[RMDB]
RNA sequence: GGGAACGACUCGAGUAGAGUCGAAAAACGCUUCACAAUGUGCGGCAAAGAAACAUUGUUUAUGCAAAGGCACUUCGCAAUGUGUGCUCAAAAAUUGCUUAUUCAAACACGCUUCACAAUGUGCGACAAAACUUCACGGUCUUCGGACCGUGAAGAAGCACCUUGUAGACUUCGGUCUACAAGGUGCAAAAGAAACAACAACAACAAC
Reactivity to 2A3 in 0.01 (KOAc 150mM, MgCl2 10mM, bicine 150mM(pH8.5), 24C), signal-to-noise 1, nucleotides 027 to 156: a010c010g010c070u060u090c010a000c020a050a010u000g000u030g020c000g040g000c090a060a010a190g070a030a110a010c080a040u000u020g010u030u030u050a030u020g000c030a090a000a040g080g000c010a010c030u200u250c130g000c120a140a230u160g050u000g060u010g010c020u060c140a090a060a000a060a060u010u020g000c000u070u030a060u150u080c020a040a090a060c040a020c080g040c020u040u020c040a000c020a110a150u120g020u040g020c050g210a080c100a040a060a080a070c030u000u000c000a000c000g000g000u000c010u000u040c130g070g000a010c000c050g000u000g000a000a010g000a000a000